[RMDB]
Source information:
An RNA of 177 nucleotides, treated with 2A3 and DMS and read out base by base. DMS (dimethyl sulfate) methylates the pairing face of unpaired adenines and cytosines. The 2A3 profile rests on 3,142 reads. The RNA was probed in 150 mM KOAc, 10 mM MgCl2 and 150 mM bicine (pH 8.5) at 24 C.
RNA sequence: GGGAACGACUCGAGUAGAGUCGAAAAGAUAUGGAGUUGCCAGGGAGCUAGUCGGAAACGACAUAGCGAAGAACUGGGACUCCUAAGUCAAAACUGUAAAGUGAUUCUUCGGAAUCACUUUACAGAACAAACCCAAAUUGUUCGCAAUUUGGGUUUGAAAAGAAACAACAACAACAAC
Reactivity to 2A3 in 0.01 (KOAc 150mM, MgCl2 10mM, bicine 150mM(pH8.5), 24C), signal-to-noise 2, nucleotides 027 to 126: g040a010u070a050u150g000g000a020g050u040u160g300c000c000a000g010g000g020a040g000c010u000a000g000u000c020g020g080a080a050a020c020g010a000c110a300u010a000g000c010g080a140a010g030a030a000c000u000g010g000g000a000c000u000c000c000u030a090a010g030u000c020a020a020a110a270c010u000g000u000a010a000a010g000u000g000a010u010u000c040u040u130c300g020g000a010a000u000c000a000c000u000u000u000a000c010a010g000a000a000
Reactivity to DMS in 0.01 (KOAc 150mM, MgCl2 10mM, bicine 150mM(pH8.5), 24C), signal-to-noise 3, nucleotides 027 to 126: g010a040u010a300u010g000g010a010g000u000u000g020c000c000a010g000g000g000a170g010c000u000a030g010u000c010g020g020a110a070a160c000g020a020c000a080u000a010g020c000g000a130a180g010a110a200c000u000g000g010g010a010c000u000c000c000u010a000a080g010u010c020a080a080a110a170c010u010g010u000a010a000a020g010u000g000a000u000u000c000u000u020c200g050g000a010a010u000c000a000c000u000u000u000a000c000a010g000a050a100